[RMDB]
RNA sequence: GGGAACGACUCGAGUAGAGUCGAAAAGAUAUGGAUCCUUACGGGAGAAGGCUAUGACAUUCUUUUUAAUCGGAAACGAUUAAAAAGAAUGUCAUAGCCCUUCAUCGAUCGUAGGGAUCCUAAGUCACCACCUAUGUAUGUUCGCAUACAUAGGUGGAAAAGAAACAACAACAACAAC
Reactivity to DMS in 0.01 (KOAc 150mM, MgCl2 10mM, bicine 150mM(pH8.5), 24C), signal-to-noise 1, nucleotides 027 to 126: g000a030u000a300u020g000g010a000u000c000c000u000u010a000c000g000g000g000a170g020a050a020g010g000c000u000a010u000g010a020c000a030u000u000c000u000u000u000u010u000a000a000u000c000g020g000a140a110a230c010g010a010u000u000a000a010a000a000a030g010a020a010u000g000u000c010a000u000a000g000c180c010c010u000u000c030a180u000c160g000a160u020c000g010u000a000g010g000g000a000u000c000c000u010a010a040g010u010c060a260